[RMDB]
RNA sequence: GGGAACGACUCGAGUAGAGUCGAAAACGAAGGACGAAGGGAGGUUUCCCCAUGGACCGCUCAACAAUGCUCCGCGCCGGACUGUAAGAUUACCUCCCCGCAGCACCUCUGCCACUUAGGCCUAUCUUCACAAUCCGAACCCCAACCUCUGAGGCACCGUCUUUAACGUGUUCGCACGUUAAAGACGAAAAGAAACAACAACAACAAC
Reactivity to 2A3 in 0.01 (KOAc 150mM, MgCl2 10mM, bicine 150mM(pH8.5), 24C), signal-to-noise 1, nucleotides 027 to 156: c030g060a040a010g070g030a010c040g060a010a070g010g010g020a030g020g000u030u050u010c030c000c000c010a040u060g000g010a070c020c020g050c050u080c080a040a140c040a050a190u140g050c010u020c040c020g050c060g020c010c070g050g020a020c010u070g040u130a160a090g030a210u130u160a080c000c000u010c010c000c000c000g000c010a020g000c000a030c010c040u100c040u010g030c000c000a040c020u030u030a020g030g000c030c010u070a060u040c020u030u050c000a070c020a080a040u010c020c060g040a060a080c020c000c000c010a050a060c050c010u050c040u090g050a070g020g010c020a000c060